[RMDB]
RNA sequence: GGGAACGACUCGAGUAGAGUCGAAAAGUGUGGGAUAGGCGGGACUAGUCUUGGCCGUCGUCUUCCAGGACGGUGCUAAAGGAGUCGGGGUGCAUACCGUGGUUCCACGGAGGAACGCUCCGCCUUGCGAGGCUUAUACAUUCGUGUAUAAGCCUCGAAAAGAAACAACAACAACAAC
Reactivity to DMS in 0.01 (KOAc 150mM, MgCl2 10mM, bicine 150mM(pH8.5), 24C), signal-to-noise 5, nucleotides 027 to 126: g020u000g010u010g000g010g000a120u010a060g010g000c070g010g010g000a080c110u010a060g000u000c050u000u010g000g010c050c030g000u000c020g000u010c070u010u000c180c120a110g000g010a020c010g010g000u000g010c070u000a040a060a070g000g000a030g010u000c020g010g000g020g030u000g000c070a170u010a030c010c010g020u000g010g010u020u000c120c010a030c030g000g020a080g000g000a090a200c070g010c030u000c000c000g010c070c010u000u000g010
Reactivity to 2A3 in 0.01 (KOAc 150mM, MgCl2 10mM, bicine 150mM(pH8.5), 24C), signal-to-noise 2, nucleotides 027 to 126: g060u050g020u060g030g040g010a090u070a110g030g020c060g030g020g000a020c060u050a030g030u010c050u030u050g030g000c010c010g010u020c000g040u000c020u150u030c040c020a020g010g040a000c000g020g020u020g040c040u110a110a020a010g070g000a020g020u040c020g000g000g000g040u050g020c010a020u050a070c000c000g020u010g000g100u300u090c120c000a000c010g010g000a020g020g030a100a040c020g000c000u010c010c000g000c000c020u000u020g030